[RMDB]
RNA sequence: GGGAACGACUCGAGUAGAGUCGAAAAAGAGCAGUGGUAUAGUGCGAAGGUACACUGAGGGACUAGGCUGACGGUCAUAGUGCGACUGUAAACAAAGCAUGUUGUGCACCCCACACCUCCCUGCUGGACGUGGGUUCAAUUCCCACCAUCUCCAGGCGCAAAUGUAUAACUUCGGUUAUACAUUUGCAAAAGAAACAACAACAACAAC
Reactivity to 2A3 in 0.01 (KOAc 150mM, MgCl2 10mM, bicine 150mM(pH8.5), 24C), signal-to-noise 7, nucleotides 027 to 156: a000g090a020g000c070a020g010u040g040g030u100a070u130a180g050u060g040c060g050a080a030g060g010u050a020c050a010c060u080g040a090g040g040g020a020c020u040a060g040g050c040u050g040a050c050g040g000u030c020a070u070a090g050u050g060c060g030a020c030u040g060u180a070a100a060c070a030a080a020g030c050a040u120g020u060u050g030u070g010c020a040c010c000c010c000a010c010a020c000c010u040c000c010c000u060g010c000u000g000g010a010c030g000u010g010g020g000u020u050c010a020a010u050u010c000c010c000a000c000c000a080u040c020u000c020c000a020g040g000c040
Reactivity to DMS in 0.01 (KOAc 150mM, MgCl2 10mM, bicine 150mM(pH8.5), 24C), signal-to-noise 3, nucleotides 027 to 156: a110g000a110g030c050a060g000u020g010g020u000a070u000a070g000u010g010c070g020a180a090g010g000u000a030c040a060c060u000g010a110g010g000g010a110c070u000a070g020g030c010u000g000a060c040g020g020u000c020a130u010a080g030u000g000c060g030a040c030u010g000u000a080a050a090c080a040a050a130g010c040a070u010g020u000u000g010u010g030c020a120c030c010c020c030a060c070a050c030c020u000c010c010c000u000g000c010u010g000g060a050c080g020u000g000g020g010u000u000c150a060a300u000u000c000c000c000a000c030c030a120u010c050u010c010c010a040g000g030c140